[RMDB]
RNA sequence: GGGAACGACUCGAGUAGAGUCGAAAAACUGCCUGUUUCGACAGGCAGUAGUCUACUUCGCGCAACCGCCGAGUCGUUCCCGCGGUUGCGUGAAGUAGUUUCAUAUGAUCUUAUUCGUAAGAUCAAACGCUAUGUACUAGUUCGCUAGUACAUAGCGAAAAGAAACAACAACAACAAC
Reactivity to 2A3 in 0.01 (KOAc 150mM, MgCl2 10mM, bicine 150mM(pH8.5), 24C), signal-to-noise 2, nucleotides 027 to 126: a000c000u010g010c000c000u000g020u010u090u070c210g080a000c000a000g020g000c000a000g000u000a000g010u000c000u000a000c000u000u000c000g000c010g000c020a000a010c000c010g000c070c130g160a090g030u000c000g010u000u010c000c000c000g000c000g000g010u000u010g000c000g000u000g000a000a000g000u000a000g000u000u020u020c010a020u070a100u140g010a010u010c000u000u050a040u070u110c250g080u040a010a010g000a000u000c000a020a040a020
Reactivity to DMS in 0.01 (KOAc 150mM, MgCl2 10mM, bicine 150mM(pH8.5), 24C), signal-to-noise 3, nucleotides 027 to 126: a020c000u000g010c000c000u000g000u000u000u020c140g010a060c010a020g000g000c000a000g000u000a020g010u000c010u000a010c000u000u000c010g010c010g000c000a020a000c010c000g020c020c250g010a140g000u010c000g010u000u000c000c000c000g030c020g000g000u000u000g000c000g020u000g010a010a010g010u000a010g010u000u000u000c030a090u020a160u000g010a000u000c010u000u000a040u010u010c180g010u000a020a010g000a020u000c010a030a070a150